[RMDB]
RNA sequence: GGGAACGACUCGAGUAGAGUCGAAAAUGUUGCCGGCGCCGAGACUGGGGCAGGGAUAGGCGGCGGUGGCAGCAGGGGAUCCGCUGAGGCCUUCCCGGCGGUGACCAGCACCACGCCGAUGAAACCGCGUUAAGAGAACCUUCGGGUUCUCUUAACGAAAAGAAACAACAACAACAAC
Reactivity to DMS in 0.01 (KOAc 150mM, MgCl2 10mM, bicine 150mM(pH8.5), 24C), signal-to-noise 2, nucleotides 027 to 126: u030g020u000u010g000c010c020g020g000c100g000c010c080g000a090g000a070c070u010g020g010g000g000c040a010g010g000g000a050u020a020g040g010c030g000g010c020g000g020u010g000g020c080a130g000c040a050g010g030g000g000a210u000c000c000g000c020u010g000a120g000g010c170c140u070u030c000c010c010g000g010c000g000g000u000g010a300c030c010a080g030c070a300c020c000a010c000g000c000c020g000a030u000g000a040a030a170c070c110g000
Reactivity to 2A3 in 0.01 (KOAc 150mM, MgCl2 10mM, bicine 150mM(pH8.5), 24C), signal-to-noise 3, nucleotides 027 to 126: u130g000u010u060g090c030c020g040g050c030g000c020c030g090a070g030a110c060u080g040g000g050g020c050a040g050g000g020a100u070a120g050g000c000g030g000c040g070g020u060g030g020c080a110g030c030a030g040g000g000g080a020u000c040c000g000c010u030g050a240g170g000c030c000u170u160c100c010c000g000g020c030g000g010u040g020a020c020c000a000g000c020a000c020c000a000c020g030c010c000g040a030u060g070a090a040a020c030c010g070